[RMDB]
Chemical mapping of a 207-nucleotide RNA with 2A3. The RNA was probed in 150 mM KOAc, 10 mM MgCl2 and 150 mM bicine (pH 8.5) at 24 C.
RNA sequence: GGGAACGACUCGAGUAGAGUCGAAAACUGACUUCAGGAGAAGUCGAAGGAAGUCUCCUGAAGAGCUCUAGGACUAGGAUCCUAGCUUCCUUCUCGAGAGAUCCUAGUCUCGAGACUUCUCUCCUCUUCGAGAUCCUGACUAGAGCUAGGAUCUCUCACGAUGAGAAAACUUCGGUUUUCUCAUCGUAAAAGAAACAACAACAACAAC
Reactivity to 2A3 in 0.01 (KOAc 150mM, MgCl2 10mM, bicine 150mM(pH8.5), 24C), signal-to-noise 2, nucleotides 027 to 156: c010u030g060a020c000u000u020c040a050g000g060a060g020a080a020g100u110c150g010a050a010g060g000a000a060g070u000c000u000c000c000u010g020a000a000g030a060g030c030u020c000u130a000g010g000a020c030u080a080g200g050a130u030c020c000u010a030g000c010u030u070c010c000u040u040c090u080c100g030a030g000a000g010a020u010c000c000u020a040g110u120c000u010c030g050a050g020a080c020u110u000c030u020c000u030c030c020u110c100u230u150c030g010a020g000a010u060c050c040u130g020a070c020u080a040g000a010g010c000u000a000g000g000a020u000c000u000c000u000c000
Source: RMDB library OK3TST, as collected in RNAgym.